[RMDB]
RNA sequence: GGGAACGACUCGAGUAGAGUCGAAAAGAUAUGGAUAUGUUGAAGGGAGCUGAGUGUUCGGAAACGAACAUACAGCGAGGAUCUUCACCAUAUCCUAAGUCAAAGAUAGGUGCUUCGGCACCUAUCACGAACAAUUAACGUUCGCGUUAAUUGUUCGAAAAGAAACAACAACAACAAC
Reactivity to 2A3 in 0.01 (KOAc 150mM, MgCl2 10mM, bicine 150mM(pH8.5), 24C), signal-to-noise 2, nucleotides 027 to 126: g010a000u080a040u120g000g000a000u000a020u020g000u020u000g010a000a020g060g020g010a090g030c000u020g030a070g220u000g020u010u020c010g010g030a080a090a050c000g010a010a000c010a000u130a050c000a010g010c040g030a060g000g030a050u050c000u000u000c000a020c020c000a010u010a000u000c000c000u000a090a020g030u010c080a210a120a080g000a000u000a000g000g000u010g000c020u060u190c300g150g000c010a000c000c000u000a000u000c000a000
Reactivity to DMS in 0.01 (KOAc 150mM, MgCl2 10mM, bicine 150mM(pH8.5), 24C), signal-to-noise 3, nucleotides 027 to 126: g000a050u000a300u010g000g000a020u000a010u010g000u010u000g000a010a010g000g010g030a060g030c000u010g010a300g020u000g000u000u010c000g010g000a100a090a230c000g030a000a000c000a010u010a180c000a000g010c000g020a090g010g000a040u000c010u000u000c000a000c060c010a010u000a000u000c000c000u010a010a110g000u000c040a090a160a130g000a010u000a000g030g020u000g000c000u000u040c230g020g020c000a000c000c010u000a000u000c000a210